[RMDB]
RNA sequence: GGGAACGACUCGAGUAGAGUCGAAAAUUAAAUCUGAUCAUCAUGAUAGUCUUGAAACAGUGUCUAUGGAAAUUAUUGAUAAUCGGUACUAAUAAAAUAGUUUAACUCUUUUAGAACCAGUUUGGUACUGUAAUUUCAGUUCAUUACUCGUUGAGAAAUAUCGCGUAUAGUUCGCUAUACGCGAUAUAAAAGAAACAACAACAACAAC
Reactivity to 2A3 in 0.01 (KOAc 150mM, MgCl2 10mM, bicine 150mM(pH8.5), 24C), signal-to-noise 3, nucleotides 027 to 156: u130u050a010a030a050u050c060u060g020a020u060c030a000u010c000a050u090g030a050u050a030g070u010c010u040u040g040a050a070a050c040a080g030u030g060u100c060u090a060u070g020g100a080a040a040u130u130a090u110u190g030a050u060a100a020u140c000g000g010u010a020c020u020a020a110u080a180a060a010a070u080a040g020u010u060u090a120a120c020u000c000u090u140u050u070a060g020a010a000c010c000a020g030u000u090u060g050g000u050a010c000u000g050u090a040a280u050u100u140c010a000g020u040u030c010a030u020u070a100c040u030c030g040u030u100g060a060g080a130a080
Reactivity to DMS in 0.01 (KOAc 150mM, MgCl2 10mM, bicine 150mM(pH8.5), 24C), signal-to-noise 2, nucleotides 027 to 156: u000u000a040a090a080u010c030u000g010a090u010c030a070u000c020a010u000g020a130u020a140g030u000c020u010u000g040a150a080a180c050a090g020u000g030u000c020u010a140u000g020g000a000a050a100u000u020a070u000u000g010a060u010a020a070u010c020g020g000u000a080c050u000a060a080u000a060a070a100a130u010a070g000u010u000u010a080a120c070u010c060u020u000u020u000a160g000a080a080c030c010a090g020u000u000u000g000g030u010a020c040u020g000u010a050a080u000u000u000c000a050g040u010u030c050a060u020u010a050c030u020c070g000u040u000g020a180g000a060a100

Description: Chemical mapping of a 207-nucleotide RNA with 2A3 and DMS. For DMS the reverse transcriptase was MarathonRT. High 2A3 reactivity points to a flexible backbone, as in loops and unpaired stretches. Values cover nucleotides 27 to 156. The RNA was probed in 150 mM KOAc, 10 mM MgCl2 and 150 mM bicine (pH 8.5) at 24 C.